[RMDB]
RNA sequence: GGGAACGACUCGAGUAGAGUCGAAAAGAUGUGGCAGUCGUGUGGUUCCGGGACGGUGCCCUGCUUCAGCCCAGCGAGAAGUUUGCCAUAUCACAGAGUGGCGCCAGCCACAGCCUGACCAUCUCAGGCUACGUCGAAUUUUCGAAUUCGACGUAGCAAAAGAAACAACAACAACAAC
Reactivity to 2A3 in 0.01 (KOAc 150mM, MgCl2 10mM, bicine 150mM(pH8.5), 24C), signal-to-noise 2, nucleotides 027 to 126: g020a010u010g000u050g020g010c000a000g050u070c070g060u090g050u130g100g000u080u080c090c020g040g060g040a060c120g040g030u060g000c040c000c000u050g000c020u050u020c040a050g020c010c020c020a020g030c030g050a180g010a170a080g040u100u210u100g020c030c000a020u030a010u050c040a050c020a010g070a030g040u040g010g030c030g020c090c040a020g050c000c020a000c000a000g060c010c020u030g020a060c020c020a120u000c050u010c050a010g070
Reactivity to DMS in 0.01 (KOAc 150mM, MgCl2 10mM, bicine 150mM(pH8.5), 24C), signal-to-noise 2, nucleotides 027 to 126: g020a080u000g040u000g000g010c000a090g020u000c080g020u020g030u000g000g030u000u000c090c060g020g000g000a090c120g000g000u000g010c030c010c020u000g020c060u000u010c070a140g030c080c040c020a110g000c110g040a090g010a040a090g000u000u010u000g030c020c020a020u000a020u000c050a170c170a050g000a100g050u000g010g050c050g010c090c110a140g000c020c020a020c000a050g030c080c000u000g000a120c090c120a080u010c160u000c050a120g010
Background:
This 177-nucleotide RNA was probed chemically with 2A3 and DMS. It was measured as part of the RMDB library OK2TST. 2A3 adducts were read by reverse transcription with SuperScript II with manganese. Conditions: 150 mM KOAc, 10 mM MgCl2 and 150 mM bicine (pH 8.5), 24 C.